[RMDB]
RNA sequence: GGGAACGACUCGAGUAGAGUCGAAAAACACGUCCAUGUACGCAUGGACGUGAAUCUGACCCCAAAGGCUGUGCUUGCACAGGAGCCCAAGGAGGUGCCUCUGAGCCCAGCCUUGGAGGUGAGUCAAAAAUAACGUACGCUUCGGCGUACGUUAUUUAAAAGAAACAACAACAACAAC
Reactivity to DMS in 0.01 (KOAc 150mM, MgCl2 10mM, bicine 150mM(pH8.5), 24C), signal-to-noise 2, nucleotides 027 to 126: a080c020a010c000g000u000c000c040a000u000g000u000a130c230g040c000a010u010g000g010a000c000g040u010g000a030a040u020c050u000g010a020c010c000c010c000a050a070a030g010g050c000u000g000u000g000c060u000u020g000c170a100c190a020g020g000a110g000c010c000c000a250a220g000g020a190g020g000u070g000c020c040u010c150u000g000a010g040c000c030c000a020g000c020c000u010u000g000g000a050g010g060u000g000a130g010u040c120a030a070
Reactivity to 2A3 in 0.01 (KOAc 150mM, MgCl2 10mM, bicine 150mM(pH8.5), 24C), signal-to-noise 2, nucleotides 027 to 126: a000c000a000c000g000u000c000c010a000u010g050u060a040c290g010c090a000u000g000g000a000c000g000u000g000a020a050u050c010u010g090a000c000c000c000c000a020a140a040g020g000c000u020g000u020g000c070u030u100g020c050a050c040a090g000g000a000g000c010c020c020a210a160g300g040a270g000g050u060g030c020c010u060c050u040g000a000g000c030c010c020a000g000c000c000u000u000g040g010a060g000g050u060g090a010g030u070c100a060a140